[RMDB]
RNA sequence: GGGAACGACUCGAGUAGAGUCGAAAAGAGGGGUUUUUCAGACUACCCUCGUCGCUAGUCUGAAAAACGCGACACGGUUAUAUGUACGGUGGACAUGCGAAAGCAUGUCCAUCGUACGUAUAACCGAGGAGCAUGUACGGUUCGCCGUACAUGCUCCAAAAGAAACAACAACAACAAC
Reactivity to DMS in 0.01 (KOAc 150mM, MgCl2 10mM, bicine 150mM(pH8.5), 24C), signal-to-noise 2, nucleotides 027 to 126: g000a090g010g010g010g000u000u000u010u000u000c010a010g000a060c010u000a010c170c010c030u000c300g000u000c070g020c200u010a030g000u000c010u010g000a000a050a020a010a030c000g000c060g010a160c130a190c020g000g000u000u000a000u000a010u010g000u000a000c010g020g010u000g000g000a010c020a000u010g000c000g000a170a070a110g000c010a010u000g020u000c000c000a010u000c000g000u000a000c000g010u000a000u000a010a000c000c010g000a010
Structure probing data (DMS) for a 177-nucleotide construct.
For DMS the reverse transcriptase was MarathonRT.
The reactions ran in a buffer of 150 mM KOAc, 10 mM MgCl2 and 150 mM bicine (pH 8.5), at 24 C.